[RMDB]
RNA sequence: GGGAACGACUCGAGUAGAGUCGAAAAGAUAUGGAGACCAGGUAGGGAGCUACUCGGAAACGAGUUAGCGAGGAUCUACCAGGUCUCCUAAGUCAAACCCCUAAGUGUGUUCGCACACUUAGGGGAACCUAACUACGCUGUUCGCAGCGUAGUUAGGAAAAGAAACAACAACAACAAC
Reactivity to 2A3 in 0.01 (KOAc 150mM, MgCl2 10mM, bicine 150mM(pH8.5), 24C), signal-to-noise 2, nucleotides 027 to 126: g010a010u070a010u140g000g000a000g010a010c020c020a040g000g030u010a000g030g000g030a020g030c000u000a000c010u000c000g000g110a040a080a040c000g000a010g040u190u230a000g030c010g030a160g000g020a010u020c010u000a010c000c000a000g020g000u000c000u000c000c000u010a010a000g020u010c020a060a050a150c010c000c000c020u010a010a000g000u000g000u030g050u070u210c300g070c140a000c000a000c020u000u000a000g000g000g000g000a000a000
Reactivity to DMS in 0.01 (KOAc 150mM, MgCl2 10mM, bicine 150mM(pH8.5), 24C), signal-to-noise 2, nucleotides 027 to 126: g000a020u000a300u000g000g010a000g000a020c000c000a050g010g010u000a000g000g000g010a040g030c000u010a070c000u000c000g000g030a150a100a160c000g000a020g000u000u000a010g020c000g040a080g030g000a030u000c010u000a020c000c000a050g010g020u000c010u000c000c000u000a000a040g010u000c020a100a090a150c020c000c000c000u010a000a010g020u000g040u000g000u000u020c160g000c010a000c020a010c000u000u000a000g010g010g000g010a000a010

An RNA of 177 nucleotides, treated with 2A3 and DMS and read out base by base. The reactions ran in a buffer of 150 mM KOAc, 10 mM MgCl2 and 150 mM bicine (pH 8.5), at 24 C. For DMS, 2,074 sequencing reads were counted. For 2A3, 6,121 sequencing reads were counted. DMS adducts were read by reverse transcription with MarathonRT.